[RMDB]
RNA sequence: GGGAACGACUCGAGUAGAGUCGAAAAGAUAUGGAGAUCUGUGGGACAUGCUGCGUCACUCGGAAACGAGUGACCAGCAACAGCCCACAUGAUCUCCUAAGUCAAAAUCUGAACGUUCGCGUUCAGAGACUUACGAUAACUUCGGUUAUCGUAAGUCAAAAGAAACAACAACAACAAC
Reactivity to DMS in 0.01 (KOAc 150mM, MgCl2 10mM, bicine 150mM(pH8.5), 24C), signal-to-noise 4, nucleotides 027 to 126: g020a040u000a300u010g020g000a030g000a000u000c000u000g000u000g020g010g010a060c090a220u000g000c010u000g020c270g020u000c000a000c000u000c000g010g000a110a090a210c010g000a020g010u010g010a010c010c010a000g010c000a020a030c240a150g000c020c000c000a000c000a000u010g010a010u000c010u000c000c000u010a000a060g000u010c040a140a100a100a270u010c000u000g000a000a000c000g010u020u010c260g030c030g010u000u000c000a010g000a020
Reactivity to 2A3 in 0.01 (KOAc 150mM, MgCl2 10mM, bicine 150mM(pH8.5), 24C), signal-to-noise 4, nucleotides 027 to 126: g030a030u090a050u210g000g000a000g000a010u000c000u010g000u030g000g000g050a070c080a190u160g000c010u020g030c100g040u010c000a000c010u010c000g010g050a110a110a070c010g000a000g010u000g000a000c000c000a010g030c010a000a000c010a010g030c010c010c000a010c010a000u010g000a000u000c010u010c000c010u010a010a010g000u000c000a000a040a030a300u050c000u000g000a000a000c000g030u110u100c300g000c000g150u000u000c030a010g010a030